Source information: Structure probing data (DMS and 2A3) for a 177-nucleotide construct. DMS adducts were read by reverse transcription with MarathonRT. The RNA was probed in 150 mM KOAc, 10 mM MgCl2 and 150 mM bicine (pH 8.5) at 24 C. It was measured as part of the RMDB library OK2TST. 2A3 adducts were read by reverse transcription with SuperScript II with manganese.
RNA sequence: GGGAACGACUCGAGUAGAGUCGAAAAGGAAUCCGGUGUCCGGCCCUGUUCCAGCGCAGAAAGAUAGACAAAGGGCUUGAACGAGGAAGCCGGUUGGCGAUGCGCAUCGGUCACGCGGUCAAACUGACCGCGUAGGAUCGUUCGCGAUCCUACGCGGAAAAGAAACAACAACAACAAC
Reactivity to DMS in 0.01 (KOAc 150mM, MgCl2 10mM, bicine 150mM(pH8.5), 24C), signal-to-noise 7, nucleotides 027 to 126: g010g010a120a100u010c020c020g010g010u010g010u000c010c020g010g000c060c030c020u000g000u010u010c020c040a070g010c050g020c050a110g000a100a110a110g010a150u010a100g000a100c130a050a120a110g000g010g020c020u000u000g020a050a060c070g010a080g000g010a070a090g020c010c010g000g000u000u000g000g010c040g000a090u000g010c050g010c040a060u000c030g000g010u010c030a060c040g000c020g000g000u000c050a050a080a150c140u000g000a170
Reactivity to 2A3 in 0.01 (KOAc 150mM, MgCl2 10mM, bicine 150mM(pH8.5), 24C), signal-to-noise 4, nucleotides 027 to 126: g050g020a080a060u040c050c010g020g050u080g040u030c010c020g020g020c010c000c000u000g000u050u000c020c040a040g000c140g000c040a010g160a090a150a010g100a200u250a060g090a070c070a070a140a050g070g000g000c010u010u020g010a050a020c040g000a080g060g030a100a000g000c000c000g060g000u010u060g030g000c020g030a050u060g040c030g000c030a010u050c030g000g000u030c020a010c050g110c010g010g040u040c040a060a050a090c070u050g020a040